Record summary
Chemical mapping of a 177-nucleotide RNA with 2A3 and DMS.

RNA sequence: GGGAACGACUCGAGUAGAGUCGAAAAUUUCAACGGUAUUGCAAGGGAUCCACAAGUGCCCUAAACCAGAUAAUCAUUCUGAAUCCAGUCAUAAAGAGAGACCUUUCUUCACAGACUGUAACGGAUCGGCUAAGGAAAGGUUCGCCUUUCCUUAGCCAAAAGAAACAACAACAACAAC
Reactivity to 2A3 in 0.01 (KOAc 150mM, MgCl2 10mM, bicine 150mM(pH8.5), 24C), signal-to-noise 1, nucleotides 027 to 126: u030u020u040c040a070a080c090g070g000u070a070u170u070g050c020a000a010g000g000g050a090u040c030c070a070c020a220a030g040u100g110c000c000c010u000a050a080a030c010c000a000g010a100u130a100a060u160c030a050u110u090c030u040g040a070a060u000c030c000a030g050u000c010a020u070a110a070a030g040a010g020a020g050a120c000c000u040u250u000c010u040u030c010a020c010a040g050a010c020u050g010u040a030a000c030g000g000a040u060c090
Reactivity to DMS in 0.01 (KOAc 150mM, MgCl2 10mM, bicine 150mM(pH8.5), 24C), signal-to-noise 2, nucleotides 027 to 126: u000u000u000c050a080a120c050g010g010u000a110u000u000g010c120a090a100g000g050g020a070u030c020c040a120c120a120a060g000u000g000c040c000c030u000a000a060a130c140c010a050g000a060u000a090a080u000c120a060u000u010c060u010g010a080a180u020c140c050a020g030u000c030a050u000a020a070a090g000a040g020a130g000a120c130c170u000u020u000c000u000u000c080a140c300a050g000a040c010u010g000u000a080a130c100g010g000a000u010c180